The record gives the reactivity of an RNA of 207 nucleotides to 2A3. The data come from the RNA Mapping Database (RMDB), library M2RFPK.
RNA sequence: GGGAACGACUCGAGUAGAGUCGAAAAUCGCAAAACCGCGGCAAGUGGAGUUAGCGAGAGGAGGCUGGGUUUUGGCUUCCUUAAGCAAUCGGUCACCGAGAAGGUGUGGUCGUUACCAUGAAAUUCCGUGACAAAAUAACGUUCGCGUUAUUUUGAAAGGGUAGUAUAGCUUCGGCUAUACUACCCUAAAAGAAACAACAACAACAAC
Reactivity to 2A3 in 0.01 (KOAc 150mM, MgCl2 10mM, bicine 150mM(pH8.5), 24C), signal-to-noise 2, nucleotides 027 to 156: u050c000g010c060a020a020a000a080c090c090g000c000g060g020c110a180a000g030u010g010g020a110g030u110u170a040g090c040g000a010g000a000g010g010a000g010g000c030u120g000g250g120u140u110u230u300g010g000c000u000u000c000c000u000u030a000a000g000c000a000a050u110c000g000g030u020c000a020c010c080g070a130g080a240a070g130g030u120g000u020g060g000u000c030g030u030u050a050c000c000a030u040g100a060a080a040u130u040c030c010g000u010g060a000c020a010a000a000a000u000a000a000c000g000u040u010c250g000c000g090u010u000a000u000u010u000u000g030a140a000
Notes
The RNA was probed in 150 mM KOAc, 10 mM MgCl2 and 150 mM bicine (pH 8.5) at 24 C. Values cover nucleotides 27 to 156. 2A3 adducts were read by reverse transcription with SuperScript II with manganese.